[RMDB]
RNA sequence: GGGAACGACUCGAGUAGAGUCGAAAAUCAUCGAGCUUUGUUGGGAUCUAUUGAAAGAUUUUUUGGAAUUCUUGUAGAGCACUAUGGUGGAGCGUUUCCUUUAUGGUUGUCUCCUGUACAAGCAGUAUACCCUUAUAUUUUUCGAAAUAUAAGGGUAAAAAGAAACAACAACAACAAC
Reactivity to DMS in 0.01 (KOAc 150mM, MgCl2 10mM, bicine 150mM(pH8.5), 24C), signal-to-noise 3, nucleotides 027 to 126: u010c040a070u000c080g010a110g010c040u000u000u000g010u000u000g010g000g010a050u000c020u010a080u010u020g010a070a110a130g000a030u000u000u020u010u000u000g020g000a100a060u000u000c010u000u010g010u010a060g010a060g020c020a060c060u000a030u000g020g020u000g000g020a080g020c110g010u010u000u000c010c010u000u020u010a080u010g010g020u000u000g010u000c040u000c050c040u000g010u010a050c160a060a090g010c060a070g010u010a240